[RMDB]
RNA sequence: GGGAACGACUCGAGUAGAGUCGAAAACAUUAUUUCUUUGCACAGACUUCCAUAUUUGUAGACUGGCGGUCAUACAAUUAUGCUGUGUCUAGUGCCUUCUGGUUAUUCACCCACAUUCCAAUGGCGGCUGCUAUCUGGUUCGCCAGAUAGAAAAGAAACAACAACAACAAC
Reactivity to DMS in 0.01 (KOAc 150mM, MgCl2 10mM, bicine 150mM(pH8.5), 24C), signal-to-noise 9, nucleotides 027 to 129: c120a080u030u030a100u010u050u000c000u000u010u010g010c000a000c010a000g020a020c050u030u050c300c010a030u000a000u010u000u000g030u000a000g000a010c010u020g050g030c220g010g000u000c010a110u040a010c030a020a020u000u030a000u000g000c100u000g010u010g030u030c020u010a050g010u030g000c000c100u020u030c090u010g030g030u020u010a100u020u010c080a070c030c020c030a080c120a140u020u010c050c040a060a060u000g010g010c030g000g000c030u010g020
Reactivity to 2A3 in 0.01 (KOAc 150mM, MgCl2 10mM, bicine 150mM(pH8.5), 24C), signal-to-noise 9, nucleotides 027 to 129: c040a050u110u130a100u070u270u030c040u040u070u090g000c000a010c000a010g010a030c020u250u050c090c000a000u010a020u010u030u010g000u010a000g010a020c020u050g220g140c150g110g000u010c010a030u020a020c000a010a010u030u010a010u030g040c060u030g020u010g020u100c030u050a050g020u020g030c010c000u070u100c050u030g050g020u080u090a110u110u110c030a090c040c030c000a040c020a090u110u060c010c010a040a030u060g030g010c010g020g010c020u020g000
An RNA of 170 nucleotides, treated with DMS and 2A3 and read out base by base.
The data come from the RNA Mapping Database (RMDB), library 15KLIB.
The DMS profile rests on 90,067 reads.
Values cover nucleotides 27 to 129.